[RMDB]
RNA sequence: GGGAACGACUCGAGUAGAGUCGAAAAACAUCUACACCUCCCGUAGAUGAUUUUUUAAGUGAUGAGGAAGAACUCGAGGAUGUUAAAGAGGAAGAAGAUCUUACCAGGAGGGACAUGUACCUUGACACAUGGCAUCCCCUUUCGAGGGGAUGCCAUGAAAAGAAACAACAACAACAAC
Reactivity to 2A3 in 0.01 (KOAc 150mM, MgCl2 10mM, bicine 150mM(pH8.5), 24C), signal-to-noise 1, nucleotides 027 to 126: a000c000a020u000c010u000a010c000a030c000c000u000c030c000c050g000u000a000g000a010u000g160a210u060u000u000u000u020u080a050a070g100u000g020a150u030g040a050g090g040a020a160g000a000a030c000u040c090g000a070g080g050a080u170g050u240u090a130a110a000g010a040g030g000a000a000g000a010a000g080a030u000c170u160u100a250c140c000a010g040g000a000g080g010g000a050c040a080u200g030u080a070c000c000u020u040g080a010c000a000

Background:
The record gives the reactivity of an RNA of 177 nucleotides to 2A3. For 2A3, 380 sequencing reads were counted. Source: RMDB library OK1LIB, as collected in RNAgym. Conditions: 150 mM KOAc, 10 mM MgCl2 and 150 mM bicine (pH 8.5), 24 C.